Structure probing data (DMS and 2A3) for a 207-nucleotide construct. High 2A3 reactivity points to a flexible backbone, as in loops and unpaired stretches.
RNA sequence: GGGAACGACUCGAGUAGAGUCGAAAAUUUGCAACCACCUGAAACGAGCCUGAAACUCACCCUGCAAAGAAGCACAAGGCUGGGGGACCGCUGUCCCCGUUUAAUCCAUUACUGCGUCCGCGGCAGUUUAGUGCGCAAUAAAACACGGUGGCAGGGGGCUACGAUAAAGAUUCGUCUUUAUCGUAGCAAAAGAAACAACAACAACAAC
Reactivity to DMS in 0.01 (KOAc 150mM, MgCl2 10mM, bicine 150mM(pH8.5), 24C), signal-to-noise 2, nucleotides 027 to 156: u000u000u010g000c100a140a110c020c020a070c060c010u000g010a050a120a080c080g020a020g090c020c020u000g000a110a120a050c020u000c010a120c040c020c020u000g030c040a170a090a130g000a160a170g010c050a050c040a090a170g010g020c040u000g000g000g000g000g010a050c000c180g020c180u000g020u000c000c000c000c000g030u000u000u000a070a070u010c030c040a110u010u010a050c000u010g010c000g000u000c060c050g030c090g020g000c000a050g000u000u000u000a110g020u010g040c020g020c110a060a150u000a070a060a060a090c040a040c020g050g000u000g010g090c020a070g000g020g010g000
Reactivity to 2A3 in 0.01 (KOAc 150mM, MgCl2 10mM, bicine 150mM(pH8.5), 24C), signal-to-noise 2, nucleotides 027 to 156: u030u020u070g030c020a050a030c020c000a040c000c040u050g010a090a040a040c050g000a040g020c030c030u150g010a140a050a040c030u060c020a050c000c000c000u010g000c040a080a070a130g050a050a110g100c000a000c010a090a000g060g000c040u080g030g000g000g010g000a010c010c080g120c190u150g050u040c010c050c000c000g000u010u050u130a030a030u040c020c010a020u080u130a040c020u000g030c020g050u060c020c090g120c010g060g000c010a010g010u040u060u020a020g000u030g000c070g000c080a060a050u110a200a060a050a000c050a030c060g100g000u090g010g030c000a010g000g000g000g050
Values cover nucleotides 27 to 156. The reactions ran in a buffer of 150 mM KOAc, 10 mM MgCl2 and 150 mM bicine (pH 8.5), at 24 C. The 2A3 profile rests on 1,161 reads. For DMS, 2,667 sequencing reads were counted.